[RMDB]
Structure probing data (2A3 and DMS) for a 170-nucleotide construct. Source: RMDB library 15KLIB, as collected in RNAgym. For 2A3 the reverse transcriptase was SuperScript II with manganese.

RNA sequence: GGGAACGACUCGAGUAGAGUCGAAAAGUGGAAGGCGGGGAGACGGGGAUCCCGGGCUUACCCACGGGAACUGCUGGGUUCCCCUGAUGUCCAGUCCCUCCCCGCUCCUGGAGAAGGGAGACUCGGGUACGUCGUAACUUCGGUUACGACAAAAGAAACAACAACAACAAC
Reactivity to 2A3 in 0.01 (KOAc 150mM, MgCl2 10mM, bicine 150mM(pH8.5), 24C), signal-to-noise 9, nucleotides 027 to 129: g110u110g000g040a070a030g060g010c020g000g000g010g000a020g000a030c050g010g010g000g010a010u040c030c010c000g010g000g000c030u060u150a140c010c010c020a020c060g020g000g010a050a050c080u140g040c040u080g060g030g000u010u020c000c000c000c000u040g060a090u120g080u050c050c010a010g050u040c030c000c000u020c000c000c000c000g000c000u010c000c010u030g030g010a070g000a050a030g000g000g000a030g000a010c010u010c010g000g000g020u080a060c080
Reactivity to DMS in 0.01 (KOAc 150mM, MgCl2 10mM, bicine 150mM(pH8.5), 24C), signal-to-noise 6, nucleotides 027 to 129: g060u050g000g030a060a060g000g010c050g000g000g000g000a000g030a080c180g000g030g020g020a050u000c040c010c100g020g010g020c020u020u040a140c040c040c020a100c290g010g010g020a040a090c110u010g020c080u030g020g020g020u020u020c000c000c000c000u010g000a070u010g000u010c030c080a090g020u050c030c160c020u000c000c000c010c010g030c000u030c010c010u040g040g010a060g000a010a010g000g000g000a000g020a030c040u000c060g000g010g020u020a080c140